[RMDB]
RNA sequence: GGGAACGACUCGAGUAGAGUCGAAAACCCCUGUUUGUCGGGGGGAAUGCCAUAGAUGAAGCGACCAUGGGGAUCUUGAACAGGGGAAACGCCAUUACUCCAUCGUUUAUCGCUAAAGGGCGGAUUGCGUCUCCACACUAUUCGUAGUGUGGAGACGAAAAGAAACAACAACAACAAC
Reactivity to DMS in 0.01 (KOAc 150mM, MgCl2 10mM, bicine 150mM(pH8.5), 24C), signal-to-noise 2, nucleotides 027 to 126: c000c010c000c070u000g020u000u020u020g020u040c120g080g000g020g010g020g010a090a090u020g020c040c070a090u020a090g020a210u020g000a100a050g030c020g030a060c090c030a080u010g020g020g020g000a100u010c080u000u010g010a050a040c100a040g010g000g000g020a040a060a150c080g010c040c040a090u000u000a110c060u010c020c040a060u000c090g000u000u000u000a080u000c060g000c040u010a100a140a150g000g000g000c010g010g000a150u000u000g030
Reactivity to 2A3 in 0.01 (KOAc 150mM, MgCl2 10mM, bicine 150mM(pH8.5), 24C), signal-to-noise 1, nucleotides 027 to 126: c030c000c000c000u000g130u030u120u110g270u140c050g000g000g000g000g010g070a030a080u060g000c020c000a050u140a060g140a070u110g080a000a020g060c050g070a030c050c050a020u040g000g060g000g000a120u020c010u030u140g030a080a000c010a070g000g020g020g000a140a030a000c020g030c040c000a020u090u000a030c060u020c020c000a010u010c010g000u020u070u040a120u070c020g000c030u030a190a030a030g070g000g000c030g000g050a100u060u120g070